[RMDB]
RNA sequence: GGGAACGACUCGAGUAGAGUCGAAAACGGAACUUGCGGACUAUCUGGAACUCGAAAACCAUAUGCCGCGUGCGUUUACUGAAGCGCAAGCCGAAGCAAUGGUGACAAUUGUCUUCAGUGCGGGUGCGGACCUACCUCCGUUCGCGGAGGUAGGUCCAAAAGAAACAACAACAACAAC
Reactivity to 2A3 in 0.01 (KOAc 150mM, MgCl2 10mM, bicine 150mM(pH8.5), 24C), signal-to-noise 1, nucleotides 027 to 126: c000g020g030a000a040c000u180u180g070c000g000g050a050c030u090a060u150c020u000g000g050a000a050c000u020c150g050a050a030a030a010c060c000a000u020a000u170g060c020c000g000c000g000u010g000c050g000u000u020u090a150c080u170g070a040a000g070c000g000c000a010a000g020c000c000g040a050a050g070c020a060a040u110g000g140u090g060a030c070a120a190u130u000g080u020c050u000u000c030a050g000u000g270c110g000g000g000u070g070c020
An RNA of 177 nucleotides, treated with 2A3 and read out base by base.
For 2A3 the reverse transcriptase was SuperScript II with manganese.
It was measured as part of the RMDB library OK1LIB.
Values cover nucleotides 27 to 126.